[RMDB]
RNA sequence: GGGAACGACUCGAGUAGAGUCGAAAACAGAGUCUCAGGAGCUUUACAUACUCUGGCUCCAGGAUCCCUGGUAAAAGUGACUGCAACUCAGGGAAGGCAGGUGGUCCACAGGUACCCCUAGGAAGGGGGUGGAAUCCAGGGGUCCAAGCAGCAUUGGAGUCUGUAAAGCAUUCGUGCUUUACAGACUAAAAGAAACAACAACAACAAC
Reactivity to 2A3 in 0.01 (KOAc 150mM, MgCl2 10mM, bicine 150mM(pH8.5), 24C), signal-to-noise 2, nucleotides 027 to 156: c020a010g040a010g100u030c020u070c210a060g030g010a070g010c060u100u160u250a100c090a070u150a090c040u070c040u060g000g030c010u020c020c010a000g000g010a000u000c010c000c000u010g000g020u080a100a080a030a010g060u040g080a060c000u020g000c000a120a100c030u030c100a100g040g000g110a000a040g060g000c030a010g080g020u030g020g030u060c060c020a030c010a020g080g120u180a080c000c010c020c000u020a030g100g140a100a070g080g010g000g010g000u010g000g050a070a040u050c000c000a000g000g010g000g000u000c000c000a000a030g010c030a010g000c020a040u100u170g140g010

Chemical mapping of a 207-nucleotide RNA with 2A3.